Chemical mapping of a 177-nucleotide RNA with 2A3.
For 2A3, 1,215 sequencing reads were counted.
The RNA was probed in 150 mM KOAc, 10 mM MgCl2 and 150 mM bicine (pH 8.5) at 24 C.
RNA sequence: GGGAACGACUCGAGUAGAGUCGAAAAGCCCCAUUUCUCGAUCUCUUUGGUUGUACAAAGUGGUAUGGCAAUUUCAUUAAAAAUGCUCAUACCGCUUUUCAGCUGAAGGAAUCGUGUUUGUGGGUAACUGGAGAUAUCCCUUCGGGGAUAUCUCCAGAAAAGAAACAACAACAACAAC
Reactivity to 2A3 in 0.01 (KOAc 150mM, MgCl2 10mM, bicine 150mM(pH8.5), 24C), signal-to-noise 2, nucleotides 027 to 126: g010c000c000c010c000a000u080u130u050c020u030c030g010a000u000c030u000c010u040u010u010g030g010u010u020g040u000a050c050a110a000a000g000u010g000g000u000a000u000g030g000c020a100a120u040u050u020c120a120u140u300a140a110a030a040a040u040g010c020u010c200a010u000a000c000c000g000c000u040u000u000u010c010a000g000c010u000g010a000a000g000g020a000a000u000c010g010u010g030u020u000u020g120u060g000g000g040u010a050a030